[RMDB]
Overview: The record gives the reactivity of an RNA of 177 nucleotides to 2A3 and DMS. Values cover nucleotides 27 to 126. For DMS, 1,132 sequencing reads were counted. The RNA was probed in 150 mM KOAc, 10 mM MgCl2 and 150 mM bicine (pH 8.5) at 24 C. For 2A3 the reverse transcriptase was SuperScript II with manganese. For 2A3, 1,069 sequencing reads were counted.

RNA sequence: GGGAACGACUCGAGUAGAGUCGAAAAUUCGUGGGGGCUGAUGCCUUCUCGCCAGACGAACUGCGCACCGAUUUGUUCAGCGACGACGAGGGUGGCUAUGUGGACUGUGUUGCGCUCGAUGCUGCCCGACGAAAAGGCGAUUCGUCGCCUUUUCGUCAAAAGAAACAACAACAACAAC
Reactivity to 2A3 in 0.01 (KOAc 150mM, MgCl2 10mM, bicine 150mM(pH8.5), 24C), signal-to-noise 1, nucleotides 027 to 126: u110u040c020g010u050g000g060g000g000g000c020u090g050a060u120g010c040c000u030u040c000u020c040g000c030c070a100g000a150c030g020a080a060c070u120g000c010g000c030a060c040c080g140a110u130u030u130g030u050u060c030a040g040c030g110a080c060g010a040c030g040a100g050g040g020u040g030g060c000u010a060u210g130u130g090g000a030c030u050g010u000g070u300u020g080c100g030c020u060c020g070a070u120g000c000u040g040c000c010c010
Reactivity to DMS in 0.01 (KOAc 150mM, MgCl2 10mM, bicine 150mM(pH8.5), 24C), signal-to-noise 1, nucleotides 027 to 126: u020u000c030g010u000g010g000g020g000g080c030u020g010a160u000g010c000c000u000u000c010u000c030g020c050c030a130g010a190c060g010a090a110c110u000g030c070g000c040a050c080c030g020a130u000u010u000g030u000u000c030a110g010c050g000a040c080g030a040c090g000a110g000g020g010u000g010g010c070u000a140u000g040u000g020g000a060c050u020g030u030g000u010u000g010c080g020c000u010c080g010a090u000g030c040u000g000c030c000c050